The record gives the reactivity of an RNA of 207 nucleotides to 2A3 and DMS. Values cover nucleotides 27 to 156. The reactions ran in a buffer of 150 mM KOAc, 10 mM MgCl2 and 150 mM bicine (pH 8.5), at 24 C. 2A3 adducts were read by reverse transcription with SuperScript II with manganese.
RNA sequence: GGGAACGACUCGAGUAGAGUCGAAAAUCUACUGUUAAGUACGUGCUUACGGAGUAAACUUCGCAUGACUAAGGUUUACAGGCCUGAAUGUGCAACUGAGUUCAAGUAAGCAGCAAUGUGGUGUAUUAGGAAGACUGCUUGACUUGGGUUCUAAUCCACUGGUUGAUGUAUUCGUACAUCAACCAGUAAAAGAAACAACAACAACAAC
Reactivity to 2A3 in 0.01 (KOAc 150mM, MgCl2 10mM, bicine 150mM(pH8.5), 24C), signal-to-noise 6, nucleotides 027 to 156: u040c030u090a090c030u040g070u130u060a020a030g010u020a090c090g060u140g040c020u050u030a040c060g030g020a030g040u150a060a110a110c050u140u100c070g000c030a020u050g040a090c060u070a070a050g050g010u010u040u170a090c100a060g150g000c020c000u040g040a100a060u160g020u020g060c040a050a030c080u070g010a000g030u020u020c010a030a010g000u010a000a010g010c020a000g020c020a040a120u150g030u080g110g050u070g040u070a200u180u080a080g030g060a060a050g040a090c010u010g010c000u030u030g050a040c000u010u010g010g000g000u020u020c010u040a070a100u050c040c050
Reactivity to DMS in 0.01 (KOAc 150mM, MgCl2 10mM, bicine 150mM(pH8.5), 24C), signal-to-noise 3, nucleotides 027 to 156: u000c030u000a080c020u000g020u000u000a060a130g030u000a070c080g060u000g000c040u000u010a100c030g010g020a170g020u000a040a060a090c040u000u010c070g030c010a140u000g000a130c100u000a100a060g010g010u000u010u010a120c110a210g000g020c010c010u020g000a080a070u000g000u000g020c040a060a080c100u010g010a050g020u000u010c060a030a050g010u010a040a040g030c000a030g010c040a040a110u010g040u010g040g020u000g010u000a190u000u000a140g020g030a300a230g020a100c020u000g000c030u000u020g040a070c030u000u000g030g020g010u000u000c010u010a080a200u000c040c100